RNA sequence: GGGAACGACUCGAGUAGAGUCGAAAAACGGUGCGGAUGUUCGCGCUUCCGUGAAACGCGAAAAUCGGACGGUGGCUGCAAGUCGCAUCGCAAAACCGCGGCAAGUGGAGUUAGCGAGAGGAGGCUGAAACCAUCCAACACUUCGGUGUUGGAUGAACUCAUAUGUUGUGUUCGCACAACAUAUGAGAAAAGAAACAACAACAACAAC
Reactivity to DMS in 0.01 (KOAc 150mM, MgCl2 10mM, bicine 150mM(pH8.5), 24C), signal-to-noise 2, nucleotides 027 to 156: a010c030g050g020u000g000c000g040g010a050u010g020u000u000c050g020c020g000c010u010u010c010c130g030u000g040a060a030a020c030g060c030g010a040a020a120a040u000c020g020g000a110c060g020g030u000g000g030c030u000g020c060a080a060g010u000c010g010c000a100u000c030g020c030a060a020a110a110c030c030g000c020g030g000c040a080a110g000u000g020g030a120g020u010u010a100g020c050g000a090g010a070g010g010a080g020g020c040u010g000a070a080a110c140c010a050u000c000c000a020a020c010a010c000u000u000c200g050g020u020g010u000u000g000g000a020u000g010a040a110
Reactivity to 2A3 in 0.01 (KOAc 150mM, MgCl2 10mM, bicine 150mM(pH8.5), 24C), signal-to-noise 6, nucleotides 027 to 156: a000c020g010g000u010g010c020g040g020a040u020g030u090u070c040g000c010g000c050u050u010c020c010g050u090g060a120a090a050c120g040c060g080a070a050a010a090u150c020g010g020a010c040g020g040u030g040g000c050u100g000c070a090a070g010u030c000g000c020a010u030c010g000c030a070a080a010a010c040c030g010c010g030g010c050a080a070g010u050g050g020a050g020u080u080a040g060c040g030a030g000a020g030g030a020g010g020c020u020g020a080a020a010c030c000a000u000c000c000a000a000c000a000c000u040u120c240g060g000u000g000u010u000g000g000a000u000g000a000a000